Description: This 177-nucleotide RNA was probed chemically with 2A3. Source: RMDB library OK1LIB, as collected in RNAgym. Conditions: 150 mM KOAc, 10 mM MgCl2 and 150 mM bicine (pH 8.5), 24 C.
[RMDB]
RNA sequence: GGGAACGACUCGAGUAGAGUCGAAAAAGCUUCCGGGACGCAGAGAGUUAUUAUGCGACCCUCGGACAUGAAUGUGUCCAUAAUGCCGACAUCCGGAUUAUGCCGACAUCUGCCCAGAUGAGCCGGACCUAUGACCUCGCUUCGGCGAGGUCAUAGGAAAAGAAACAACAACAACAAC
Reactivity to 2A3 in 0.01 (KOAc 150mM, MgCl2 10mM, bicine 150mM(pH8.5), 24C), signal-to-noise 1, nucleotides 027 to 126: a000g140c050u160u000c000c000g000g050g000a000c000g000c030a020g040a000g000a000g040u050u120a230u200u200a170u080g040c080g090a250c000c000c000u050c040g000g000a000c020a060u140g240a160a000u300g040u000g000u020c000c000a000u030a030a000u230g260c020c050g000a100c030a000u100c000c000g000g000a000u010u000a020u200g000c060c000g000a000c000a000u010c000u020g000c000c000c000a000g010a030u180g030a000g000c000c010g000g000a000